[RMDB]
RNA sequence: GGGAACGACUCGAGUAGAGUCGAAAAAGUAAGCUAGAGGAUUGGUAUAGGCGUGUAGUUGGUGGCGGCACUAAUGUCGCUAGGAGAUAGGGUGCUUAACCUCUCAAAACGGAUAAAGCAAUACGUAGUAUACGAAGUUUUUCGAAACUUCGUAUACAAAAGAAACAACAACAACAAC
Reactivity to DMS in 0.01 (KOAc 150mM, MgCl2 10mM, bicine 150mM(pH8.5), 24C), signal-to-noise 8, nucleotides 027 to 126: a090g010u020a060a100g010c050u010a060g000a090g010g000a060u000u000g000g010u010a050u010a050g000g010c030g020u020g000u010a050g010u000u000g010g030u010g000g010c070g000g020c010a080c260u050a100a090u020g010u000c010g000c040u000a050g000g010a060g000a070u010a070g000g010g000u010g010c040u000u020a080a080c050c020u000c020u000c110a040a050a070a080c140g000g010a080u000a060a070a070g020c080a060a050u020a060c080g010u020a140
Reactivity to 2A3 in 0.01 (KOAc 150mM, MgCl2 10mM, bicine 150mM(pH8.5), 24C), signal-to-noise 9, nucleotides 027 to 126: a000g140u120a040a010g030c060u080a030g000a030g070g070a100u060u100g040g030u090a060u040a130g070g000c040g000u080g030u070a090g030u020u070g020g080u040g010g000c010g000g000c010a020c090u200a190a160u140g010u040c010g000c020u020a030g000g080a070g020a030u090a070g080g020g030u030g000c000u020u010a040a030c020c010u030c000u020c070a050a060a020a060c050g040g000a080u150a140a100a040g050c060a040a050u090a110c070g050u050a030
An RNA of 177 nucleotides, treated with DMS and 2A3 and read out base by base. DMS adducts were read by reverse transcription with MarathonRT. Source: RMDB library OK1LIB, as collected in RNAgym. The DMS profile rests on 24,103 reads. Conditions: 150 mM KOAc, 10 mM MgCl2 and 150 mM bicine (pH 8.5), 24 C.